[RMDB]
RNA sequence: GGGAACGACUCGAGUAGAGUCGAAAAAUUACUCAAGAAUGCUAUUGAACCUCCGACUUAUUUGAAGGCAAUGACACUUGAAACAUGUAGCAUCGACAUUGCAAGGAACCUCCGGAAGCUCUCCUGGAAUUGAUCAAGUAUUCGUACUUGAUCAAUUAAAAGAAACAACAACAACAAC
Reactivity to DMS in 0.01 (KOAc 150mM, MgCl2 10mM, bicine 150mM(pH8.5), 24C), signal-to-noise 9, nucleotides 027 to 126: a060u010u010a090c060u000c010a080a080g000a120a070u010g010c040u000a030u000u000g020a120a120c040c010u000c020c020g000a100c210u000u010a100u000u000u000g010a060a060g010g010c030a030a050u000g010a060c070a070c040u000u010g010a070a080a080c160a050u000g010u000a060g010c030a030u000c070g020a100c070a050u000u000g010c050a060a090g000g000a070a070c070c030u000c030c040g000g000a070a100g010c090u000c060u000c010c020u000g010g010
Reactivity to 2A3 in 0.01 (KOAc 150mM, MgCl2 10mM, bicine 150mM(pH8.5), 24C), signal-to-noise 4, nucleotides 027 to 126: a000u030u040a070c010u010c020a010a010g070a140a080u100g020c020u050a030u110u120g050a120a140c010c010u000c020c000g060a040c060u140u140a100u160u140u130g050a050a000g020g000c010a020a020u030g030a040c020a010c060u010u070g020a060a070a030c030a030u110g030u070a010g030c000a020u030c010g020a020c020a050u000u110g000c020a030a010g040g010a030a020c010c010u040c020c000g020g010a020a010g020c010u020c010u000c040c030u030g050g070